[RMDB]
An RNA of 177 nucleotides, treated with DMS and 2A3 and read out base by base. Values cover nucleotides 27 to 126. As a SHAPE reagent, 2A3 marks flexible, mostly unpaired nucleotides at the ribose 2'-OH. The RNA was probed in 150 mM KOAc, 10 mM MgCl2 and 150 mM bicine (pH 8.5) at 24 C. 2A3 adducts were read by reverse transcription with SuperScript II with manganese. Source: RMDB library OK1LIB, as collected in RNAgym.
RNA sequence: GGGAACGACUCGAGUAGAGUCGAAAACUGCUGGCCAGGCGCAUUUAUAAACCAUUCGUCGUCUGCCAACUUCCACCACUUGUCAAUUAAAUGCCCCACUUAAAGGCCUCCACUCAAAUCUCGAAUCCAUAGUACGCUAGUUCGCUAGCGUACUAUGAAAAGAAACAACAACAACAAC
Reactivity to DMS in 0.01 (KOAc 150mM, MgCl2 10mM, bicine 150mM(pH8.5), 24C), signal-to-noise 4, nucleotides 027 to 126: c080u010g000c050u000g000g010c080c060a040g000g000c040g000c100a050u030u040u010a090u030a080a070a130c250c110a040u020u010c100g000u030c030g030u010c020u000g000c010c030a030a040c030u010u010c010c010a070c030c020a050c040u020u010g000u000c030a110a050u040u020a030a030a060u030g020c050c000c000c020a080c090u000u000a040a100a090g000g010c050c010u000c020c020a040c030u000c040a020a080a110u020c020u010c030g020a070a070u020c130
Reactivity to 2A3 in 0.01 (KOAc 150mM, MgCl2 10mM, bicine 150mM(pH8.5), 24C), signal-to-noise 9, nucleotides 027 to 126: c030u050g020c020u030g020g020c080c040a020g020g000c010g000c030a030u020u200u070a270u190a100a140a080c090c050a100u090u100c070g080u040c010g010u010c100u010g010c000c000a010a030c020u060u020c020c020a060c010c010a050c060u060u100g060u090c050a070a150u090u140a150a090a060u150g030c010c000c000c000a040c020u060u110a110a020a000g020g000c000c010u010c010c010a030c010u070c030a060a120a140u050c050u020c050g080a060a050u020c020